[RMDB]
RNA sequence: GGGAACGACUCGAGUAGAGUCGAAAAGAUAUGGAAGUACUGCUCAAUGAUGUACAGGAACUGUCGGAAACGAUAAUCACUGUAUUGAGAGCAGACUUCCUAAGUCGAGCCGCUCUUCGGAGCGGAAGACAGAGAAAAACUUCGGUUUUUCUCUGUCAAAAGAAACAACAACAACAAC
Reactivity to DMS in 0.01 (KOAc 150mM, MgCl2 10mM, bicine 150mM(pH8.5), 24C), signal-to-noise 4, nucleotides 027 to 126: g000a030u000a150u010g000g010a010a010g000u000a080c000u010g000c000u000c000a110a090u000g020a030u010g000u000a000c000a010g010g000a120a140c290u010g030u000c000g010g000a050a030a060c010g030a010u000a020a040u020c100a180c000u000g000u000a000u000u000g000a300g000a030g000c010a000g000a020c000u000u000c000c000u000a010a040g000u000c010g000a240g000c020c000g000c010u000c000u000u010c200g020g010a000g000c010g000g000a020a040
Reactivity to 2A3 in 0.01 (KOAc 150mM, MgCl2 10mM, bicine 150mM(pH8.5), 24C), signal-to-noise 4, nucleotides 027 to 126: g010a010u030a020u090g000g000a000a000g010u110a300c000u000g000c010u000c020a070a300u280g150a030u140g110u010a000c000a010g000g030a060a030c040u070g020u030c020g000g040a050a020a030c010g000a010u020a040a070u080c100a040c300u000g010u000a020u000u080g010a020g010a000g020c020a000g000a000c000u010u010c000c000u000a020a000g000u000c010g000a030g000c000c000g000c010u000c010u030u100c290g160g000a000g000c000g000g000a000a000